Source information: An RNA of 177 nucleotides, treated with DMS and 2A3 and read out base by base. For DMS, 685 sequencing reads were counted. Reactivities are given for positions 27 through 126. For DMS the reverse transcriptase was MarathonRT. For 2A3 the reverse transcriptase was SuperScript II with manganese.
RNA sequence: GGGAACGACUCGAGUAGAGUCGAAAAACGGUGGCCGGUAGCAAUGGCUUGUGGUUCGUUUAGAGACUGCUUGCUUAUAACACUUGGCCAGAACGAAAAUCUAUCUAAUAUCCGUAGCGUCAUAAUGGAUGAGGUUAUCGUUCGCGAUAACCUCAUCAAAAGAAACAACAACAACAAC
Reactivity to DMS in 0.01 (KOAc 150mM, MgCl2 10mM, bicine 150mM(pH8.5), 24C), signal-to-noise 1, nucleotides 027 to 126: a050c070g000g000u000g060g000c010c000g000g040u000a090g020c170a120a150u000g000g010c000u000u000g010u000g000g020u020u000c030g020u050u050u000a110g000a130g010a000c000u000g000c020u000u020g000c010u000u010a030u010a100a100c180a050c000u000u000g050g020c010c020a100g010a070a090c040g000a030a050a130a110u010c080u020a070u000c040u010a090a090u000a040u000c010c000g010u000a030g010c140g010u000c070a090u000a070a120u010g000
Reactivity to 2A3 in 0.01 (KOAc 150mM, MgCl2 10mM, bicine 150mM(pH8.5), 24C), signal-to-noise 1, nucleotides 027 to 126: a050c030g030g010u000g000g000c000c000g000g070u040a030g000c100a080a140u040g000g000c000u020u000g000u000g000g000u030u060c030g010u150u120u140a080g050a000g010a030c000u000g000c000u010u030g000c000u120u120a040u010a170a020c010a000c090u240u300g000g000c000c010a010g020a050a020c010g000a050a020a000a150u100c010u070a040u080c020u050a100a080u080a090u080c030c050g030u020a000g050c050g120u080c080a120u070a290a120u210g100